[RMDB]
RNA sequence: GGGAACGACUCGAGUAGAGUCGAAAAUUACAUAAGUCUAACACCUUGUUUCGGACUAACAAGGGCGCAUGGAGGAUGGCCGCGCCUCCAUAGUUAGACGUCCGAGAACCAGCCGAAAUGAAAAAGAACUAUAGUCGACUUUCGAGUCGACUAUAGUAAAAGAAACAACAACAACAAC
Reactivity to DMS in 0.01 (KOAc 150mM, MgCl2 10mM, bicine 150mM(pH8.5), 24C), signal-to-noise 3, nucleotides 027 to 126: u010u080a050c130a070u020a060a100g010u000c020u000a030a060c020a100c030c020u000u000g020u000u010u000c070g000g030a110c070u000a040a060c060a020a030g030g020g020c170g050c200a040u000g000g010a010g000g000a030u010g000g010c000c010g010c150g000c000c000u010c000c000a020u000a070g010u010u000a020g010a060c030g030u000c040c010g000a130g000a110a140c050c080a110g000c010c030g000a050a060a060u060g000a130a080a060a100a100g020a120
Reactivity to 2A3 in 0.01 (KOAc 150mM, MgCl2 10mM, bicine 150mM(pH8.5), 24C), signal-to-noise 3, nucleotides 027 to 126: u190u140a070c050a060u280a120a060g020u000c000u020a020a010c010a090c030c000u010u010g060u020u060u090c150g120g060a120c110u030a010a000c010a010a000g000g050g000c080g040c060a020u010g000g000a000g000g010a010u070g040g000c030c010g010c050g010c020c000u000c000c000a020u010a040g010u010u020a020g010a040c000g000u000c030c000g050a040g010a090a030c040c020a010g040c010c030g040a050a020a060u110g070a070a100a050a030a010g100a030